[RMDB]
RNA sequence: GGGAACGACUCGAGUAGAGUCGAAAACGCGUCACAAAAGUGACGCGAAGAAAUUGACUCGACACCGUAAUGCUCUCUGCAAGCAUCAAUAAAAUCCACUAUUACUUCUGUUUGCGGUCGAGCUCCGCUUGGGCGAAAAAAGCGGCAGCUUGCCUCAGGAUAUCAUUCGUUCGCUUGAGCUCUUUAUUCUCGCGCUCUAAGACGGCAAGGCGUUCUUCAGUUGAUUGCGUAUUAGAAGAGGGUUUAGACGGUUGAGCUUGAGAAAAAGCUACCAGUUCGCUGGUAGCAAAAGAAACAACAACAACAAC
Reactivity to DMS in 0.01 (KOAc 150mM, MgCl2 10mM, bicine 150mM(pH8.5), 24C), signal-to-noise 4, nucleotides 027 to 266: c010g010c000g010u000c000a000c000a150a130a210a220g010u010g000a000c000g020c010g020a020a060g000a080a140a130u010u000g010a030c010u000c000g010a150c100a070c040c010g000u000a080a050u030g010c000u010c020u000c000u010g000c090a090a130g010c010a020u010c070a030a030u010a060a090a150a110u020c080c050a120c200u030a080u010u000a090c100u010u010c140u000g000u010u000u010g010c120g010g020u030c050g010a010g000c010u000c020c030g000c020u000u000g000g010g020c090g020a010a050a090a160a030a010g000c030g000g000c160a020g020c010u010u010g010c020c010u000c020a040g020g010a050u000a060u020c120a100u010u010c090g010u010u000c050g010c040u000u000g000a080g010c030u000c050u010u000u010a060u030u000c080u010c050g020c260g000c030u000c040u000a030a080g010a060c100g000g000c070a070a060g000g000c010g000u010u000c030u000u000c110a140g000u000u000g010a050u000u000g010c010g000u010a080u010u020a110g000a090a030g010a040g000g000g000u000u000u000a120g010a040c010g000g000u010u010g010a130g000c010u000u000g010a020g000a080a050a090a090a140
Reactivity to 2A3 in 0.01 (KOAc 150mM, MgCl2 10mM, bicine 150mM(pH8.5), 24C), signal-to-noise 5, nucleotides 027 to 266: c000g000c010g000u010c030a020c010a030a300a220a140g010u020g000a000c000g000c000g000a000a010g010a010a180a030u070u080g010a030c000u000c010g030a010c030a000c030c000g000u030a060a040u160g010c010u000c000u010c010u040g040c050a050a060g000c010a020u040c040a050a040u130a150a140a060a060u090c080c050a070c100u110a090u300u170a140c060u110u150c050u080g170u190u160u100g060c060g050g100u220c140g020a010g000c000u000c000c000g000c000u010u020g080g090g150c100g160a100a090a000a000a000a010g010c010g000g000c020a000g000c010u020u020g010c000c000u010c010a020g060g030a040u050a040u160c070a120u180u150c040g020u040u060c020g010c030u030u040g020a030g050c010u020c030u150u300u080a190u240u080c090u060c090g060c010g010c010u000c010u050a060a040g070a080c020g020g060c040a040a070g060g040c020g070u050u030c040u100u040c040a060g030u030u050g040a080u130u210g000c040g010u150a070u100u110a110g050a100a010g010a040g030g020g020u040u050u010a140g090a070c030g000g000u010u030g010a000g000c000u010u050g020a020g020a080a060a030a030a000
Structure probing data (DMS and 2A3) for a 307-nucleotide construct. For DMS the reverse transcriptase was MarathonRT. The RNA was probed in 150 mM KOAc, 10 mM MgCl2 and 150 mM bicine (pH 8.5) at 24 C.